An RNA of 177 nucleotides, treated with 2A3 and read out base by base. For 2A3, 756 sequencing reads were counted. The RNA was probed in 150 mM KOAc, 10 mM MgCl2 and 150 mM bicine (pH 8.5) at 24 C.

RNA sequence: GGGAACGACUCGAGUAGAGUCGAAAAAACUGUAUCUUUCUAAGCUAUCACAUAUCAAAGGAGAGAUUGAAUGCUUUUUUGGAGAUCUAGAUCAUUACUAUAUGUGUCUCCUAUAAUCACAUCAUAGGAAUAAGGCGGUGUUCGCACCGCCUUAUUCAAAAGAAACAACAACAACAAC
Reactivity to 2A3 in 0.01 (KOAc 150mM, MgCl2 10mM, bicine 150mM(pH8.5), 24C), signal-to-noise 2, nucleotides 027 to 126: a000a000c020u020g000u000a000u020c040u000u090u090c080u120a010a040g000c000u030a030u130c080a080c060a220u170a000u100c110a050a000a030g040g000a050g010a030g040a080u020u020g130a140a070u190g000c000u050u000u050u040u080u280g080g000a040g000a020u030c120u140a100g040a030u080c010a050u150u280a070c000u000a000u000a000u060g000u000g000u000c000u010c010c000u080a080u040a110a110u160c000a000c000a030u010c050a000u000a010g000